The record gives the reactivity of an RNA of 177 nucleotides to 2A3 and DMS. For 2A3, 2,318 sequencing reads were counted. For 2A3 the reverse transcriptase was SuperScript II with manganese. The reactions ran in a buffer of 150 mM KOAc, 10 mM MgCl2 and 150 mM bicine (pH 8.5), at 24 C. For DMS, 2,220 sequencing reads were counted.

RNA sequence: GGGAACGACUCGAGUAGAGUCGAAAAAGGAUGGGCAGCGAGGAUAGCCGCAAGAUCCGGAGUCGAAUCAACCAGCUGACGGACUGGGAGGCCAAGAUGAUCGGCGAAACCAUCAACAUCAAAGCCGACGUCUCUAGAGAUUCGUCUCUAGAGACGUAAAAGAAACAACAACAACAAC
Reactivity to 2A3 in 0.01 (KOAc 150mM, MgCl2 10mM, bicine 150mM(pH8.5), 24C), signal-to-noise 2, nucleotides 027 to 126: a000g090g000a030u060g000g030g000c020a020g020c060g040a020g040g010a110u060a070g020c000c010g020c010a010a020g050a090u040c020c000g020g010a000g010u080c040g050a030a080u080c000a010a070c030c010a020g000c020u080g060a070c030g060g000a060c000u000g000g030g000a030g020g000c040c000a020a030g000a020u030g020a030u100c000g010g000c010g000a020a010a010c000c000a020u040c040a050a070c000a080u100c000a000a020a060g030c030c010g010
Reactivity to DMS in 0.01 (KOAc 150mM, MgCl2 10mM, bicine 150mM(pH8.5), 24C), signal-to-noise 3, nucleotides 027 to 126: a040g000g000a060u000g000g000g020c040a010g010c070g000a130g020g000a110u010a110g020c040c040g000c130a100a090g010a060u010c030c040g000g000a080g030u010c030g050a100a080u030c150a120a090c040c020a040g000c030u010g000a100c130g000g000a100c050u020g000g000g000a130g000g020c050c070a080a140g000a020u010g000a140u000c050g000g010c030g020a070a060a150c020c000a040u000c070a090a110c160a050u000c080a040a080a130g010c010c020g000